[RMDB]
RNA sequence: GGGAACGACUCGAGUAGAGUCGAAAACAGCCAAGAGGAGAGCAUGGCUCAGGUGGGAUUCAGGCGAGAACAGGGCAACGCACACCUACUAGCCAAGAUACAAAGCACUUAAUACAGGGAGGAGUCACGAUGUAAGGAUAUUCGUAUCCUUACAUCGAAAAGAAACAACAACAACAAC
Reactivity to 2A3 in 0.01 (KOAc 150mM, MgCl2 10mM, bicine 150mM(pH8.5), 24C), signal-to-noise 9, nucleotides 027 to 126: c030a010g060c020c010a070a030g050a040g070g040a050g010a000g040c050a070u070g040g000c010u010c050a030g050g030u050g010g020g010a020u070u100c070a040g050g000c020g030a060g020a070a030c050a050g020g050g000c030a070a040c040g010c020a030c010a000c050c000u040a060c020u020a020g000c010c010a040a020g050a030u130a050c060a020a100a010g020c020a030c060u090u120a070a030u130a140c050a030g030g030g010a040g010g010a020g040u040c020a020
Reactivity to DMS in 0.01 (KOAc 150mM, MgCl2 10mM, bicine 150mM(pH8.5), 24C), signal-to-noise 9, nucleotides 027 to 126: c110a120g010c050c040a080a090g000a090g010g000a100g010a070g020c080a090u000g010g010c070u010c100a050g020g010u000g010g000g000a120u000u000c100a070g010g010c040g000a080g000a070a080c110a070g000g010g010c060a060a070c100g010c060a070c070a060c030c020u000a070c070u000a060g010c020c030a040a060g010a090u000a050c130a050a080a080g010c060a040c090u000u000a050a090u010a070c120a050g000g000g010a050g010g010a070g010u010c100a150